[RMDB]
RNA sequence: GGGAACGACUCGAGUAGAGUCGAAAAACAAGCUGCACGUGCGUGCGAGCUGUUUUCGAAAUCGCACGUUUCACGUAAAGACGCAACUCUACUCGAGAAAGCGAGUCACGCAGACAGCGUCAAGGAAGACUAUGAGUAAGUUCGCUUACUCAUAGUCAAAAGAAACAACAACAACAAC
Reactivity to DMS in 0.01 (KOAc 150mM, MgCl2 10mM, bicine 150mM(pH8.5), 24C), signal-to-noise 6, nucleotides 027 to 126: a060c170a110a100g010c020u000g010c300a020c000g030u000g020c080g010u010g010c000g010a020g010c140u000g000u000u000u010u010c100g010a070a080a100u000c010g010c020a050c020g010u000u010u010c040a030c040g010u010a050a180a060g010a170c050g010c060a080a040c000u000c000u000a000c000u000c000g000a020g000a030a050a100g010c020g010a150g010u000c040a040c060g000c050a090g010a070c150a090g000c010g000u000c050a090a110g000g010a100a130
Reactivity to 2A3 in 0.01 (KOAc 150mM, MgCl2 10mM, bicine 150mM(pH8.5), 24C), signal-to-noise 6, nucleotides 027 to 126: a000c080a060a040g050c020u030g000c040a000c020g040u040g010c020g000u010g000c000g010a020g020c110u130g150u130u080u080u160c060g070a040a030a070u030c010g000c010a020c020g020u070u160u140c040a020c000g020u040a040a030a040g040a020c060g010c030a010a020c000u000c000u000a000c000u000c000g000a000g000a000a010a000g030c010g010a030g070u060c020a010c100g030c010a020g050a240c040a040g040c000g030u050c060a050a040g100g020a100a070

Description: Structure probing data (DMS and 2A3) for a 177-nucleotide construct. For DMS, 8,240 sequencing reads were counted. The RNA was probed in 150 mM KOAc, 10 mM MgCl2 and 150 mM bicine (pH 8.5) at 24 C. It was measured as part of the RMDB library M2PK90.